[RMDB]
RNA sequence: GGGAACGACUCGAGUAGAGUCGAAAAUCUAGGAAUUCGUUCCUAGAAAAAAGAUAUGGAGACCCAGUAGACAUGUCGUGAUCAAUUCGGAAACGAAUUGCGUACGACAACAGCUACGGGUCUCCUAAGUCAAAAAACCCCUCCUUCGGGAGGGGAAGGUAAAAGGGGUAUUCGUACCCCUUUUACCAAAAGAAACAACAACAACAAC
Reactivity to 2A3 in 0.01 (KOAc 150mM, MgCl2 10mM, bicine 150mM(pH8.5), 24C), signal-to-noise 1, nucleotides 027 to 156: u000c000u000a000g000g010a050a050u110u020c250g030u100u010c010c000u000a000g000a060a060a010a000a010a050g010a000u020a000u050g010g010a000g000a000c020c020c080a040g020u010a000g060a060c090a200u300g000u010c000g010u000g010a010u300c000a000a010u000u000c010g000g050a040a060a040c000g000a000a020u000u010g010c010g060u290a010c010g010a000c000a010a000c020a010g050c000u000a010c000g000g030g000u010c010u000c000c000u000a000a000g020u030c010a000a000a000a090a040a020c020c300c300c000u000c030c030u060u060c260g030g000g010a000g000g000g000g000a050a080